Description:
Chemical mapping of a 177-nucleotide RNA with DMS and 2A3. Conditions: 150 mM KOAc, 10 mM MgCl2 and 150 mM bicine (pH 8.5), 24 C. Reactivities are given for positions 27 through 126.

RNA sequence: GGGAACGACUCGAGUAGAGUCGAAAAAGGGAUCCCCGAGACGCUGGAGGAGCACCGGGAAAAAGAAAAGAAGGCAAGGAAUUGGUAGAAAAGAGCGAGCCUCCCGAUACGAGUUUGCCAGGACCUACGUUAAUAACUUGUUCGCAAGUUAUUAACGAAAAGAAACAACAACAACAAC
Reactivity to DMS in 0.01 (KOAc 150mM, MgCl2 10mM, bicine 150mM(pH8.5), 24C), signal-to-noise 3, nucleotides 027 to 126: a080g010g010g000a130u020c040c020c020c040g010a110g020a070c120g020c080u000g000g000a080g010g000a110g010c040a070c080c040g000g000g010a030a030a070a090a070g010a060a050a040a070g000a080a040g000g010c060a060a070g010g010a060a100u000u000g000g020u000a040g000a100a040a040a080g020a100g000c010g020a120g010c040c030u000c020c020c000g010a100u000a030c090g000a060g000u000u000u010g010c030c030a060g000g000a100c050c020u000a090
Reactivity to 2A3 in 0.01 (KOAc 150mM, MgCl2 10mM, bicine 150mM(pH8.5), 24C), signal-to-noise 2, nucleotides 027 to 126: a000g050g000g010a060u030c040c000c000c000g070a040g020a030c040g000c040u050g000g070a030g020g070a020g000c010a020c030c000g000g000g000a020a110a030a000a030g100a020a090a010a000g060a050a020g050g000c050a020a020g020g000a050a110u110u050g090g000u110a050g060a030a170a070a000g040a000g060c020g000a000g010c000c000u000c020c010c000g020a020u060a100c070g000a060g040u000u120u110g060c040c010a000g030g010a020c020c010u040a060